[RMDB]
RNA sequence: GGGAACGACUCGAGUAGAGUCGAAAAGUCAGAGCCUGCGCCACUUUGGUGGGUGGGUGAUGGCGUGCCUUUUGAAGAAUGAGCCUGCGAGUUAGCGGCAUGUCGCGAGGUUAACCCGUGUGGGGUAGAUUCAUGUGUCGUUCGCGACACAUGAAUCAAAAGAAACAACAACAACAAC
Reactivity to DMS in 0.01 (KOAc 150mM, MgCl2 10mM, bicine 150mM(pH8.5), 24C), signal-to-noise 2, nucleotides 027 to 126: g000u000c010a010g020a300g000c000c000u010g000c000g040c030c000a010c030u000u060u080g020g050u000g010g010g050u000g000g000g020u000g010a200u000g010g000c000g010u050g000c010c000u010u010u050u020g030a070a050g010a070a040u020g000a160g000c020c040u020g070c020g000a080g000u020u000a110g020c030g000g000c020a080u000g030u020c030g020c010g000a000g000g000u000u010a080a080c020c000c000g010u000g030u040g020g000g010g030u010a080
Reactivity to 2A3 in 0.01 (KOAc 150mM, MgCl2 10mM, bicine 150mM(pH8.5), 24C), signal-to-noise 3, nucleotides 027 to 126: g020u010c000a000g000a030g010c000c000u020g010c170g300c000c000a050c010u080u120u300g180g010u000g000g040g000u000g000g030g020u020g020a030u010g010g000c000g000u040g010c000c000u080u100u020u190g110a120a080g030a020a070u160g020a010g020c000c010u040g010c060g020a060g070u070u120a020g040c030g050g000c030a020u120g090u030c010g000c050g060a020g040g000u050u110a070a070c020c000c000g040u110g060u100g040g040g000g020u080a030
Annotation:
Chemical mapping of a 177-nucleotide RNA with DMS and 2A3. For 2A3 the reverse transcriptase was SuperScript II with manganese. For DMS the reverse transcriptase was MarathonRT. The RNA was probed in 150 mM KOAc, 10 mM MgCl2 and 150 mM bicine (pH 8.5) at 24 C. Source: RMDB libraries RFM100 and RFMREP, as collected in RNAgym.